[RMDB]
Chemical mapping of a 207-nucleotide RNA with 2A3 and DMS. The RNA was probed in 150 mM KOAc, 10 mM MgCl2 and 150 mM bicine (pH 8.5) at 24 C. For 2A3 the reverse transcriptase was SuperScript II with manganese. Values cover nucleotides 27 to 156. It was measured as part of the RMDB library M2RFPK. The DMS profile rests on 3,274 reads. For 2A3, 2,803 sequencing reads were counted.
RNA sequence: GGGAACGACUCGAGUAGAGUCGAAAACCGGAAUGGUUCCGCCGUGAUCGGGCCAUGCAAUAGUUGCCAACGACAACUAUGCUCCGGUUGCUCAGGCAGCGUAACGCUGCUUGAAAGACCACACGAAUUAGCGCGACAUUGUUCGCAAUGUCGCGAACAUGUUCAAGUACUUCGGUACUUGAACAUGAAAAGAAACAACAACAACAAC
Reactivity to 2A3 in 0.01 (KOAc 150mM, MgCl2 10mM, bicine 150mM(pH8.5), 24C), signal-to-noise 4, nucleotides 027 to 156: c000c000g010g000a070a060u090g010g000u300u300c020c010g020c040c070g150u140g050a240u090c030g000g010g000c000c000a010u070g000c020a060a300u000a000g010u000u000g010c040c090a200a100c170g070a140c020a000a000c030u000a000u010g000c040u000c010c010g000g010u000u000g000c010u000c020a000g010g000c000a010g000c020g050u160a140a090c300g000c010u000g010c000u000u000g000a000a000a000g040a010c040c000a040c030a010c070g100a120a170u150u090a190g070c000g000c000g000a000c000a000u010u010g020u050u070c150g030c110a000a000u000g000u000c000g000c000g000a000a000
Reactivity to DMS in 0.01 (KOAc 150mM, MgCl2 10mM, bicine 150mM(pH8.5), 24C), signal-to-noise 2, nucleotides 027 to 156: c020c000g020g010a060a070u000g000g040u010u000c000c000g030c040c130g000u020g040a160u000c010g010g000g010c000c030a040u020g030c110a190a080u000a020g000u000u000g020c000c020a200a180c210g000a100c000a010a000c000u010a010u000g030c070u000c050c020g030g020u000u040g010c180u000c000a030g000g010c020a020g030c000g030u010a080a130c150g000c010u010g020c000u010u030g000a000a080a100g020a210c020c000a050c020a170c080g020a220a130u000u000a070g000c030g040c010g020a020c000a070u030u000g000u010u020c250g010c010a030a010u000g000u010c020g010c010g010a020a120